[RMDB]
RNA sequence: GGGAACGACUCGAGUAGAGUCGAAAAGCGCGAUGGCAUUCGGUGACUAUCCAGCUGAGUACAACCCCAAGGUGCACGGGCCCUACGACCCCGCUCGCUUCUACGGCAAAGGUGAGCAGGUUACGUAAACUAUGUAACUGUUCGCAGUUACAUAGUUAAAAGAAACAACAACAACAAC
Reactivity to 2A3 in 0.01 (KOAc 150mM, MgCl2 10mM, bicine 150mM(pH8.5), 24C), signal-to-noise 9, nucleotides 027 to 126: g030c030g010c040g050a060u070g030g000c030a050u050u090c090g140g040u070g060a130c020u030a040u050c020c020a030g000c020u030g020a020g060u060a050c050a070a110c020c010c000c020a020a050g050g010u050g010c030a020c060g010g030g000c000c000c010u020a020c020g050a050c000c000c010c040g000c000u010c000g010c000u060u010c030u120a100c060g080g000c040a090a070a020g030g010u030g010a000g000c020a020g030g010u030u060a040c020g020u030a020
Reactivity to DMS in 0.01 (KOAc 150mM, MgCl2 10mM, bicine 150mM(pH8.5), 24C), signal-to-noise 9, nucleotides 027 to 126: g010c030g020c170g010a050u010g010g010c030a090u010u020c090g010g010u010g000a120c040u010a050u000c030c070a210g010c030u000g000a100g020u010a070c140a080a120c070c010c010c040a080a090g010g010u000g010c060a070c060g010g000g000c020c020c030u000a030c050g000a160c180c010c010c040g010c020u000c020g010c010u000u000c080u010a090c090g000g010c070a080a170a050g010g010u000g000a030g010c020a060g010g000u000u000a060c060g010u010a060